[RMDB]
RNA sequence: GGGAACGACUCGAGUAGAGUCGAAAAUGAAAUAUAGCGUACGAAGAACCACGUACGCAAACAGAAAAGCGGACCUACGAGCGCACAGCGCUCAGGUAUGAGCGCAAAACAUAGGAAUUGAAAAAAACGUAAUUCUGUAGUUCGCUACAGAAUUACGAAAAGAAACAACAACAACAAC
Reactivity to 2A3 in 0.01 (KOAc 150mM, MgCl2 10mM, bicine 150mM(pH8.5), 24C), signal-to-noise 2, nucleotides 027 to 126: u040g030a020a090a000u300a110u140a170g030c000g000u020a010c030g040a260a090g050a220a010c070c000a040c030g000u020a000c000g000c010a000a040a000c050a010g150a000a130a020a000g030c000g020g020a020c000c010u040a050c070g080a010g090c000g020c020a040c050a200g000c000g000c000u000c000a010g000g030u120a070u130g020a020g010c000g040c040a030a010a010a000c040a000u150a040g120g030a130a170u100u240g050a010a170a010a040a040a000a000
Reactivity to DMS in 0.01 (KOAc 150mM, MgCl2 10mM, bicine 150mM(pH8.5), 24C), signal-to-noise 1, nucleotides 027 to 126: u010g000a100a110a130u010a110u010a080g050c000g010u000a000c000g000a060a050g030a150a130c030c040a100c020g000u000a000c000g020c000a050a040a090c180a050g000a100a010a110a060g000c020g010g000a080c010c000u000a030c100g020a050g000c000g020c060a180c130a150g040c000g000c000u020c000a000g010g000u020a020u000g030a040g020c000g000c030a020a030a030a010c080a040u000a050g010g000a180a060u020u030g000a000a000a090a030a080a050a130